[RMDB]
RNA sequence: GGGAACGACUCGAGUAGAGUCGAAAAGAUAUGGACUGGUACGAGCAUGCAGAAUCGGAAACGAUUAAGUAUAUGCGAUGAGUACCCAGUCCUAAGUCAAAGCUUGAACCGUUCGCGGUUCAAGCAACUGAGGUGAAGUGUUCGCACUUCACCUCAGAAAAGAAACAACAACAACAAC
Reactivity to DMS in 0.01 (KOAc 150mM, MgCl2 10mM, bicine 150mM(pH8.5), 24C), signal-to-noise 2, nucleotides 027 to 126: g010a030u000a120u010g000g000a010c010u000g000g030u010a010c000g010a030g030c000a020u000g020c150a130g010a020a010u000c000g020g000a070a020a070c000g020a040u000u000a060a130g010u030a090u020a090u000g040c000g010a110u020g030a240g020u000a020c190c040c080a000g000u000c000c000u000a000a060g000u000c010a120a130a190g030c000u000u000g000a000a010c000c000g000u000u000c240g020c010g010g000u000u010c000a000a000g000c040a020a020
Reactivity to 2A3 in 0.01 (KOAc 150mM, MgCl2 10mM, bicine 150mM(pH8.5), 24C), signal-to-noise 2, nucleotides 027 to 126: g000a010u050a000u070g000g020a000c000u010g000g020u010a010c010g020a020g020c010a040u080g050c080a030g170a300a010u000c000g000g000a000a030a010c020g040a030u070u030a130a070g070u070a300u070a050u300g020c040g220a300u040g000a020g000u000a020c000c060c010a000g000u000c010c000u010a020a010g030u010c040a190a040a040g000c000u000u000g020a030a020c030c000g050u050u100c300g000c030g080g000u000u000c000a000a000g000c000a000a000
Annotation
Chemical mapping of a 177-nucleotide RNA with DMS and 2A3. Values cover nucleotides 27 to 126. For DMS the reverse transcriptase was MarathonRT. The RNA was probed in 150 mM KOAc, 10 mM MgCl2 and 150 mM bicine (pH 8.5) at 24 C. Values are in units of 0.01, from 0 to 300, in steps of 10. For DMS, 1,152 sequencing reads were counted. 2A3 is a SHAPE reagent: it acylates the 2'-hydroxyl of flexible nucleotides of all four kinds.